[RMDB]
RNA sequence: GGGAACGACUCGAGUAGAGUCGAAAAUGCCAUGGGCUCAGUUCUUGGCCCUUAGCGAGAGUGCAACGCUGGUAUACAAUGAGAGGGAGUUUGUCAACAGAAAACUGUACCACAUUGCGACACAUGGCUCCAGUAUGUUGUUCGCAACAUACUGGAGAAAAGAAACAACAACAACAAC
Reactivity to DMS in 0.01 (KOAc 150mM, MgCl2 10mM, bicine 150mM(pH8.5), 24C), signal-to-noise 3, nucleotides 027 to 126: u010g000c010c010a090u000g000g000g000c010u020c100a080g020u020u000c070u010u000g030g000c040c000c010u000u010a050g030c020g000a080g010a120g010u010g000c040a080a070c060g010c070u020g010g010u020a080u010a070c160a100a080u010g010a080g010a090g030g010g010a060g020u000u000u000g010u010c080a130a070c210a110g010a070a020a060a040c100u000g010u010a120c010c020a100c040a020u000u000g000c030g000a080c060a050c130a080u010g010g000
Reactivity to 2A3 in 0.01 (KOAc 150mM, MgCl2 10mM, bicine 150mM(pH8.5), 24C), signal-to-noise 2, nucleotides 027 to 126: u070g010c020c020a040u050g000g000g030c070u100c270a130g050u140u080c030u080u070g010g000c000c000c000u000u030a040g000c010g020a050g010a020g170u100g010c030a050a050c020g010c060u000g000g000u070a070u010a140c160a130a120u190g040a040g050a070g120g030g030a050g030u010u100u080g100u110c040a050a080c030a120g110a070a050a000a040c080u060g000u080a030c010c020a020c010a040u030u060g010c020g050a010c040a000c000a150u080g080g000
Structure probing data (DMS and 2A3) for a 177-nucleotide construct.
Source: RMDB library OK2TRN, as collected in RNAgym.
DMS adducts were read by reverse transcription with MarathonRT.
Values are in units of 0.01, from 0 to 300, in steps of 10.